[RMDB]
RNA sequence: GGGAACGACUCGAGUAGAGUCGAAAAAGGAGCCAGAGCUCCAGUCCCCACUGCUGCCAGCCAUGAGGCUGGGGGAGGGGAAUGGUAGCCCCUGCAGGAAGGUUGACACUCACUGGUCUUUGUCACACAUAUCAGACAGCUUCGGCUGUCUGAUAUGAAAAGAAACAACAACAACAAC
Reactivity to 2A3 in 0.01 (KOAc 150mM, MgCl2 10mM, bicine 150mM(pH8.5), 24C), signal-to-noise 2, nucleotides 027 to 126: a000g030g000a010g020c030c060a050g020a030g020c020u000c010c010a010g020u000c020c010c020c010a050c040u230g050c010u170g150c030c000a000g000c000c000a140u300g180a140g220g010c000u000g010g000g000g010g020a060g000g000g020g040a020a020u080g010g030u120a020g000c040c000c000c000u020g020c030a010g050g100a110a000g050g040u090u090g030a020c010a010c050u040c000a040c020u030g020g050u010c060u060u080u090g050u050c000a000c000a000
Reactivity to DMS in 0.01 (KOAc 150mM, MgCl2 10mM, bicine 150mM(pH8.5), 24C), signal-to-noise 3, nucleotides 027 to 126: a130g000g000a070g010c010c100a060g010a160g010c010u000c000c000a060g000u000c000c000c000c070a140c130u010g030c060u000g010c020c010a000g000c000c000a240u020g010a200g010g020c000u000g000g010g000g000g000a090g020g000g000g000a020a030u000g000g000u010a070g010c010c040c020c020u010g010c060a060g000g000a050a050g010g000u010u010g010a040c040a090c090u000c040a070c050u000g010g000u010c030u000u000u000g010u010c060a070c160a250
Chemical mapping of a 177-nucleotide RNA with 2A3 and DMS. Source: RMDB library OK2TRN, as collected in RNAgym. High DMS reactivity at an A or C suggests that its Watson-Crick edge is free. The DMS profile rests on 3,618 reads. The RNA was probed in 150 mM KOAc, 10 mM MgCl2 and 150 mM bicine (pH 8.5) at 24 C.